[RMDB]
RNA sequence: GGGAACGACUCGAGUAGAGUCGAAAAUUUGCGCGCUUCUGCGAGGGCCAGCGCCGAGUACGCGAAUUCGCGGUCAAUCAUCACGCCUGUGUCGUUGAUGAACUGAUCCAGCGCGUACAUGUCCCACUCGGCGUCCAGUACCGGGUACCGCAUCAGGUAUGAUGAUAACAUUCGUGUUAUCAUCAUAAAAAGAAACAACAACAACAAC
Reactivity to DMS in 0.01 (KOAc 150mM, MgCl2 10mM, bicine 150mM(pH8.5), 24C), signal-to-noise 4, nucleotides 027 to 156: u000u000u000g010c010g020c060g000c040u000u010c050u000g050c080g010a140g010g000g010c060c050a170g010c040g030c010c050g000a080g000u000a020c000g020c020g000a070a170u000u000c100g020c070g030g020u000c020a010a070u000c010a020u000c010a030c020g010c060c080u020g020u000g020u000c010g010u010u000g030a020u000g010a080a040c040u010g010a020u000c020c030a120g000c030g020c020g050u000a030c070a090u010g010u010c010c020c030a180c060u000c030g020g010c010g000u000c060c080a140g020u010a060c030c010g020g010g000u000a050c030c010g010c040a110u000c070a140g010g020
Reactivity to 2A3 in 0.01 (KOAc 150mM, MgCl2 10mM, bicine 150mM(pH8.5), 24C), signal-to-noise 7, nucleotides 027 to 156: u090u080u090g050c060g010c000g020c020u080u070c050u140g050c020g030a150g020g030g000c040c050a030g000c000g000c010c010g000a010g020u020a000c010g010c010g040a100a190u150u140c120g020c130g020g000u000c000a000a030u010c000a000u000c010a000c010g040c040c140u300g060u140g080u300c010g070u140u140g000a000u010g010a080a160c100u030g000a000u000c020c010a020g020c000g000c000g000u000a000c000a010u100g040u000c000c010c000a010c010u000c000g010g000c000g030u060c050c030a050g020u040a080c020c020g030g000g020u050a080c000c020g040c040a100u090c050a040g090g000
Annotation: Conditions: 150 mM KOAc, 10 mM MgCl2 and 150 mM bicine (pH 8.5), 24 C. This 207-nucleotide RNA was probed chemically with DMS and 2A3. High DMS reactivity at an A or C suggests that its Watson-Crick edge is free.